[RMDB]
RNA sequence: GGGAACGACUCGAGUAGAGUCGAAAACUGGGUUCGCAGCACGUCGAGCUGGCCGCGCCGCCAGAUCCGUCGCCGGUGCCGCUGAAGGAUGGUGACACCAUCCCGUUGAAGCGCUCCUCGGCCUAUCGCUUGUUCUAUCGUUCGCGAUAGAACAAGCAAAAGAAACAACAACAACAAC
Reactivity to DMS in 0.01 (KOAc 150mM, MgCl2 10mM, bicine 150mM(pH8.5), 24C), signal-to-noise 2, nucleotides 027 to 126: c000u000g000g030g020u010u000c120g000c000a090g010c100a110c080g000u000c020g000a060g000c060u010g000g010c020c000g000c190g000c020c050g000c020c050a050g030a270u000c070c020g040u010c110g040c050c010g000g000u000g000c300c030g030c060u040g020a110a090g000g000a010u000g060g060u000g020a160c100a300c050c000a020u000c000c000c090g000u030u050g000a050a130g000c000g000c000u000c030c000u050c100g000g000c000c040u020a120u010c110
Reactivity to 2A3 in 0.01 (KOAc 150mM, MgCl2 10mM, bicine 150mM(pH8.5), 24C), signal-to-noise 3, nucleotides 027 to 126: c000u030g040g020g000u120u080c050g000c040a000g030c020a040c090g080u080c050g080a050g020c030u030g020g000c000c020g090c040g030c050c050g020c000c010a040g000a050u040c030c020g070u050c040g000c010c020g020g050u030g040c090c020g010c020u050g040a060a020g040g000a010u010g000g070u090g030a040c030a030c110c000a010u000c000c000c020g050u080u150g090a080a010g000c000g000c040u010c000c040u040c030g030g040c030c010u160a160u190c080